[RMDB]
RNA sequence: GGGAACGACUCGAGUAGAGUCGAAAAAUGCACUGGUUCGCCAGUGCAUGAUUACCGAGAAACUACCUCGGUAUAAAAGUGCAACCCUUGGAAACAAGGGAAUUCCGAACCGAUUCGUCGGUUCGAAUAACCGAUCACGAUUCGUCGUGAUCGGUUAAAAAGAAACAACAACAACAAC
Reactivity to DMS in 0.01 (KOAc 150mM, MgCl2 10mM, bicine 150mM(pH8.5), 24C), signal-to-noise 2, nucleotides 027 to 126: a000u000g000c000a010c000u000g010g000u000u010c140g020c000c000a000g000u000g000c020a010u000g010a100u000u000a060c000c000g050a030g000a180a150a110c260u010a160c170c000u000c000g020g000u000a010u000a040a080a080a070g000u000g020c130a180a110c000c000c000u000u000g000g010a200a090a200c000a010a040g040g010g000a020a000u000u010c040c000g000a000a000c000c000g000a030u000u000c180g020u000c000g010g030u000u010c010g010a070a080
Chemical mapping of a 177-nucleotide RNA with DMS. DMS adducts were read by reverse transcription with MarathonRT. The RNA was probed in 150 mM KOAc, 10 mM MgCl2 and 150 mM bicine (pH 8.5) at 24 C. Source: RMDB library M2PK50, as collected in RNAgym.